This 207-nucleotide RNA was probed chemically with 2A3 and DMS.
For 2A3, 600 sequencing reads were counted.
It was measured as part of the RMDB library OK3TST.
For DMS, 1,583 sequencing reads were counted.
[RMDB]
RNA sequence: GGGAACGACUCGAGUAGAGUCGAAAAUUGGGGAACCGAGUACAAAUACCGCCUCCCUCUUGGUCGAUCCUUCCAAGACUUUGAGCAAAAGGUUCAUGUUAUCCAAGACGGUUUAAACAACCGCAGGAGCCAUUUUAAGCCGUCUGACCUCAAGGGGUCCCAGCAAUAUUUUCGAAUAUUGCUGGGAAAAAGAAACAACAACAACAAC
Reactivity to 2A3 in 0.01 (KOAc 150mM, MgCl2 10mM, bicine 150mM(pH8.5), 24C), signal-to-noise 1, nucleotides 027 to 156: u040u070g000g000g010g000a000a070c140c030g050a010g020u060a040c120a150a200a110u120a170c020c070g050c060c020u000c000c000c000u000c000u000u000g010g000u010c010g040a120u070c010c010u000u040c000c020a000a000g000a080c000u050u140u220g020a010g020c000a000a040a040a020g050g000u030u000c000a000u020g010u090u090a080u090c030c030a070a000g010a020c030g010g020u000u020u030a030a020a020c070a050a050c120c030g000c100a010g200g010a030g000c000c040a020u070u000u040u080a000a010g000c000c000g000u000c030u020g020a020c000c000u030c020a030a050g000g000g000g020
Reactivity to DMS in 0.01 (KOAc 150mM, MgCl2 10mM, bicine 150mM(pH8.5), 24C), signal-to-noise 1, nucleotides 027 to 156: u000u000g020g010g030g020a070a110c030c050g020a100g050u000a300c000a100a080a170u010a050c030c050g000c020c020u000c060c020c000u000c040u000u000g020g030u000c060g020a120u000c070c030u010u000c040c020a120a180g010a060c040u020u000u010g020a080g000c050a050a040a040a090g000g010u020u000c070a170u020g010u000u020a090u020c080c060a050a100g010a200c020g000g000u020u000u000a090a050a130c070a120a040c020c020g010c030a100g030g010a030g010c030c020a190u010u000u000u000a050a060g010c010c000g020u000c000u000g010a090c070c040u020c030a010a060g030g010g000g020